[RMDB]
RNA sequence: GGGAACGACUCGAGUAGAGUCGAAAAGUAAGCAAAGACGUAAUAACCGUCAUGGUUAGUAAAAUGAGCGCACGCCGUAAGAAAUGCAAACGCGUUAUGAUUCAGAACACGUGGUGCGCUAUUAUAAGGUCAGGAUGGGUUUCGACCCAUCCUGACCAAAAGAAACAACAACAACAAC
Reactivity to DMS in 0.01 (KOAc 150mM, MgCl2 10mM, bicine 150mM(pH8.5), 24C), signal-to-noise 1, nucleotides 027 to 126: g000u000a120a120g030c010a060a130a070g030a040c050g040u000a140a050u000a030a040c020c000g020u000c170a030u040g000g000u010u000a090g050u020a050a020a170a180u000g000a010g000c040g020c110a000c020g040c100c060g000u000a090a150g000a110a070a060u000g000c090a050a070a080c130g010c010g030u000u010a180u010g010a190u030u000c160a070g000a070a040c110a010c030g010u000g020g010u000g000c000g030c000u010a000u000u000a020u000a040a080